This 177-nucleotide RNA was probed chemically with DMS and 2A3.

RNA sequence: GGGAACGACUCGAGUAGAGUCGAAAAUUACACUCAUGUCGACGCAGAUCAUAGAUAAUAACAAUGAUUAUGGGACAGGUUAAGAUCUGGCAUCAGUAGAAUCCGGCUAGAAGGAAGCGCCCGCGAACGAGUUUGACACUUUCGAGUGUCGAAUUCGAAAAGAAACAACAACAACAAC
Reactivity to DMS in 0.01 (KOAc 150mM, MgCl2 10mM, bicine 150mM(pH8.5), 24C), signal-to-noise 9, nucleotides 027 to 126: u020u030a100c140a100c050u010c060a070u000g010u010c030g000a110c060g010c040a040g000a030u000c010a050u010a080g010a110u020a080a070u020a110a090c090a070a050u020g000a050u010u010a050u020g010g000g010a050c070a030g000g000u000u000a070a080g010a060u020c020u010g010g010c040a060u010c050a060g010u000a060g000a060a070u000c050c020g000g010c030u000a060g010a090a060g000g000a110a090g010c080g000c020c010c020g020c120g000a050a160
Reactivity to 2A3 in 0.01 (KOAc 150mM, MgCl2 10mM, bicine 150mM(pH8.5), 24C), signal-to-noise 4, nucleotides 027 to 126: u040u020a020c030a010c020u030c020a060u040g010u000c010g010a030c020g000c030a010g000a020u010c000a010u020a050g110a020u080a110a030u080a100a020c060a030a070u070g020a010u010u060a030u090g010g000g020a010c010a010g020g000u020u050a050a000g010a030u000c000u020g010g020c000a020u010c030a020g060u080a000g030a020a020u000c010c000g000g000c010u020a000g010a070a030g060g020a040a020g010c000g010c020c010c000g010c020g010a030a020